[RMDB]
RNA sequence: GGGAACGACUCGAGUAGAGUCGAAAAAUCAAUACACAUGUUGUAGCUUGCUUGACCGAUGUGGUGACCAAUGUCCCCUACACAGUAUGCAGGUACGGUUACGAUAUUACCAUAAUGCACGCCAUCACGUAGUGAGGCAGUUCGCUGCCUCACUACGAAAAGAAACAACAACAACAAC
Reactivity to DMS in 0.01 (KOAc 150mM, MgCl2 10mM, bicine 150mM(pH8.5), 24C), signal-to-noise 2, nucleotides 027 to 126: a010u030c110a060a080u030a060c070a030c150a050u040g060u010u000g010u000a080g000c000u060u020g000c010u000u000g020a070c030c030g080a060u000g070u000g010g010u010g010a100c000c070a030a060u050g030u010c020c020c000c010u000a100c040a010c050a060g000u030a110u000g000c080a010g000g000u000a040c160g010g000u000u040a000c150g020a100u020a050u000u000a030c080c030a040u040a070a040u010g010c050a060c010g020c000c000a050u000c160a140
Reactivity to 2A3 in 0.01 (KOAc 150mM, MgCl2 10mM, bicine 150mM(pH8.5), 24C), signal-to-noise 3, nucleotides 027 to 126: a000u160c060a040a060u160a070c090a000c020a070u100g030u040u070g020u020a000g030c010u030u060g000c010u000u070g030a070c050c000g140a100u090g060u030g010g070u060g000a020c020c010a050a090u140g070u030c020c000c000c000u070a020c070a010c000a010g090u120a030u180g050c020a020g030g000u010a060c040g040g000u080u030a010c030g030a030u040a110u130u110a100c020c040a070u130a120a030u120g100c020a010c070g000c020c000a050u010c000a030
An RNA of 177 nucleotides, treated with DMS and 2A3 and read out base by base. Conditions: 150 mM KOAc, 10 mM MgCl2 and 150 mM bicine (pH 8.5), 24 C.